[RMDB]
RNA sequence: GGGAACGACUCGAGUAGAGUCGAAAAUCAUCAAGAAGUAGGCUUAGGCCAAUUGCUUGGUGGUCAAAGUAGAGGGAAGGUAGCACUUCGACGCCUCUAAGUACGCUGUGGGAGUAGUGCUUAAAUCAAAAGCACAGCGACUUCGGUCGCUGUGCAAGAUUCAUGUGCACUUCGGUGCACAUGAAUCAAAAGAAACAACAACAACAAC
Reactivity to 2A3 in 0.01 (KOAc 150mM, MgCl2 10mM, bicine 150mM(pH8.5), 24C), signal-to-noise 1, nucleotides 027 to 156: u060c010a000u000c020a010a010g030a110a000g030u100a030g040g000c010u070u070a050g050g040c000c040a030a080u020u040g020c000u030u020g030g000u020g030g010u010c040a030a110a060g080u070a020g080a030g000g030g030a040a040g040g040u060a020g040c030a010c070u000u090c050g050a060c000g120c030c000u040c020u030a060a000g070u020a020c030g000c050u020g000u060g100g000g000a050g050u130a020g010u030g050c020u000u140a080a090a080u090c090a070a060a040a000g010c000a000c000a000g000c000g000a000c000u010u040c100g080g000u000c000g040c020u010g000u000g000c000a000a000